[RMDB]
RNA sequence: GGGAACGACUCGAGUAGAGUCGAAAACUUGAAACUCAAGGGUCACCCUGAGGAGAGGUAAACACUCAGGAAUUUCUGGCUCUCCAUUGCCUUGGUGAAGAAGUUCCUAUAGACCAAGGACACACUCUCAGUCGUACUACUUCGGUAGUACGACUGAAAAAGAAACAACAACAACAAC
Reactivity to 2A3 in 0.01 (KOAc 150mM, MgCl2 10mM, bicine 150mM(pH8.5), 24C), signal-to-noise 4, nucleotides 027 to 126: c020u000u090g050a130a040a050c060u040c110a070a090g010g000g030u010c010a040c010c020c020u000g030a030g040g030a100g030a040g080g060u150a070a100a090c060a060c060u030c010a000g030g190a070a130u110u210u090c050u070g030g000c000u000c000u010c020c020a200u150u110g060c000c010u000u020g010g010u060g030a030a090g050a020a020g030u060u000c020c000u040a060u080a090g100a010c000c000a000a000g010g030a000c010a010c000a020c040u070c010
Reactivity to DMS in 0.01 (KOAc 150mM, MgCl2 10mM, bicine 150mM(pH8.5), 24C), signal-to-noise 2, nucleotides 027 to 126: c000u020u050g000a200a190a070c090u030c080a000a100g030g030g000u000c080a050c090c030c000u020g000a050g000g020a130g080a130g000g000u000a130a060a040c150a050c060u000c000a050g020g010a120a010u010u010u050c030u000g010g030c030u010c000u030c120c090a130u000u000g010c000c000u000u000g000g000u000g040a060a010g000a050a050g050u010u000c000c000u000a150u010a060g000a040c020c000a070a020g000g000a110c180a110c050a010c040u000c140